[RMDB]
Source: RMDB library 15KLIB, as collected in RNAgym. The record gives the reactivity of an RNA of 170 nucleotides to 2A3 and DMS. The RNA was probed in 150 mM KOAc, 10 mM MgCl2 and 150 mM bicine (pH 8.5) at 24 C. The DMS profile rests on 11,883 reads. For 2A3 the reverse transcriptase was SuperScript II with manganese.

RNA sequence: GGGAACGACUCGAGUAGAGUCGAAAAUAACAUGUUAACGGGCAUUGCUGCACGUCCUCCACCAGGUGAACAGUUUAAGCACCUCGUGCCUCUUAUGCAUAAGGGGGCUGCGUGGCCUAUUGUUAGAGAGCGCGUCUGUUCGCAGACGCGAAAAGAAACAACAACAACAAC
Reactivity to 2A3 in 0.01 (KOAc 150mM, MgCl2 10mM, bicine 150mM(pH8.5), 24C), signal-to-noise 3, nucleotides 027 to 129: u080a020a000c080a060u120g030u080u100a070a010c040g020g000g000c010a050u060u250g030c050u070g000c070a020c080g040u000c000c000u030c000c010a030c030c020a000g080g000u010g020a070a080c060a210g030u020u110u260a030a000g020c000a020c000c000u000c000g010u000g020c000c000u050c020u010u120a090u250g070c020a050u040a130a070g010g000g000g040g020c020u020g000c000g040u060g040g000c020c020u080a090u040u040g060u020u020a020g000a020g010a040g140
Reactivity to DMS in 0.01 (KOAc 150mM, MgCl2 10mM, bicine 150mM(pH8.5), 24C), signal-to-noise 2, nucleotides 027 to 129: u010a030a020c170a040u010g020u020u050a090a040c090g010g020g050c050a130u020u020g030c110u020g000c060a050c100g020u020c030c020u020c000c000a040c070c060a100g020g050u020g040a060a140c090a090g030u000u060u060a090a050g010c050a040c000c000u010c140g020u010g030c040c030u030c070u000u000a150u000g030c030a000u000a000a110g000g000g000g030g100c080u020g010c100g010u020g040g020c000c040u030a070u000u040g020u020u030a020g010a180g030a160g020